[RMDB]
Chemical mapping of a 177-nucleotide RNA with DMS. The reactions ran in a buffer of 150 mM KOAc, 10 mM MgCl2 and 150 mM bicine (pH 8.5), at 24 C. The DMS profile rests on 854 reads. Reactivities are given for positions 27 through 126. DMS adducts were read by reverse transcription with MarathonRT.
RNA sequence: GGGAACGACUCGAGUAGAGUCGAAAAGUUUCCCCUUAUGUCCAGUCCCUCUCCCGUCCUGGUGAAGGGAGAUUCCGGAACGUUUAGCAUUUGAGGGACAAAGCCGCCCCCGGGCGCUCCCCUCGGACUGUAAGUGAAUCUUCGGAUUCACUUACAGAAAAGAAACAACAACAACAAC
Reactivity to DMS in 0.01 (KOAc 150mM, MgCl2 10mM, bicine 150mM(pH8.5), 24C), signal-to-noise 1, nucleotides 027 to 126: g020u020u000u000c000c010c000c090u010u010a020u000g040u000c060c260a210g000u000c020c000c060u000c000u000c040c020c000g000u010c040c060u020g040g020u020g020a060a020g010g000g000a020g010a040u010u010c100c100g040g000a030a050c060g030u000u000u000a180g010c090a060u000u000u010g010a060g010g000g010a010c080a100a130a100g000c080c100g030c010c000c040c170c270g000g030g020c000g010c040u000c090c000c010c040u000c020g020g020a170